[RMDB]
An RNA of 177 nucleotides, treated with DMS and 2A3 and read out base by base. For DMS, 2,117 sequencing reads were counted. The RNA was probed in 150 mM KOAc, 10 mM MgCl2 and 150 mM bicine (pH 8.5) at 24 C. It was measured as part of the RMDB library OK2TST. 2A3 adducts were read by reverse transcription with SuperScript II with manganese.
RNA sequence: GGGAACGACUCGAGUAGAGUCGAAAAGCACUGGGUGUUGCAGCAGCCGCCCAAGCAACGGCAGCAGUGGCCUUGGUAGAAGCAAGACAGAAUGCAGCCCAAAUACAGAGUCUCUCUGAAGCAAUACCUUAUCGGAGUGAUUCGUCACUCCGAUAAGAAAAGAAACAACAACAACAAC
Reactivity to DMS in 0.01 (KOAc 150mM, MgCl2 10mM, bicine 150mM(pH8.5), 24C), signal-to-noise 3, nucleotides 027 to 126: g030c050a100c090u010g000g000g020u000g000u000u010g010c050a080g000c100a110g010c030c000g000c010c000c050a060a130g000c100a140a140c110g000g020c030a060g020c070a100g040u000g000g010c040c060u000u000g020g000u010a060g020a100a100g010c030a020a070g000a040c040a080g010a090a100u000g030c040a060g010c000c010c040a030a110a110u010a140c040a060g000a020g000u010c090u010c030u000c010u000g000a090a100g010c190a050a050u010a080c150
Reactivity to 2A3 in 0.01 (KOAc 150mM, MgCl2 10mM, bicine 150mM(pH8.5), 24C), signal-to-noise 2, nucleotides 027 to 126: g010c020a010c120u060g020g010g010u090g070u120u120g020c020a050g000c020a010g020c000c010g050c000c000c010a020a010g010c010a000a070c060g050g000c000a030g010c020a030g040u040g080g000c000c000u040u040g030g030u140a050g040a220a010g040c020a030a000g020a050c010a030g170a170a050u080g000c010a010g010c000c000c000a040a050a010u140a020c030a010g040a010g160u050c070u010c000u020c010u150g020a060a010g060c020a010a100u120a190c060